[RMDB]
RNA sequence: GGGAACGACUCGAGUAGAGUCGAAAAAAAGAUAUGGAAGCCAGAUGAGCUUGGAUUUAUACUGAACUUGUGAUCGGAAACGAUCACAAUCCCAGUAUUGUCAGCUCGCUGGCUUCCUAAGUCAAAACAUUGAACAUGACUUCGGUCAUGUUCAAUGAAAAGAAACAACAACAACAAC
Reactivity to DMS in 0.01 (KOAc 150mM, MgCl2 10mM, bicine 150mM(pH8.5), 24C), signal-to-noise 2, nucleotides 027 to 126: a110a120a090g000a020u000a300u000g000g000a010a010g010c000c000a010g010a100u010g010a030g020c000u000u010g000g020a020u000u000u000a000u010a010c010u000g000a050a110c280u000u010g000u000g010a020u000c000g000g000a120a110a210c000g010a000u010c000a000c000a010a020u010c220c190c000a000g000u000a000u000u000g000u000c000a030g020c000u000c000g020c010u000g000g000c010u000u010c000c000u020a000a060g000u010c010a080a140a100a140
Reactivity to 2A3 in 0.01 (KOAc 150mM, MgCl2 10mM, bicine 150mM(pH8.5), 24C), signal-to-noise 1, nucleotides 027 to 126: a000a000a000g040a020u070a000u100g010g000a020a000g000c000c000a090g300a300u100g010a020g010c050u150u110g130g000a010u180u300u040a020u010a010c010u020g010a120a000c040u030u000g000u000g000a010u030c020g020g020a050a060a070c010g020a000u000c010a000c000a000a010u000c020c000c000a000g020u010a030u000u020g010u010c020a000g010c000u020c010g060c010u000g000g000c000u000u000c000c000u000a010a010g010u000c000a000a020a060a080
This 177-nucleotide RNA was probed chemically with DMS and 2A3. Reactivities are given for positions 27 through 126. For DMS, 1,737 sequencing reads were counted. Source: RMDB library TTRDES, as collected in RNAgym.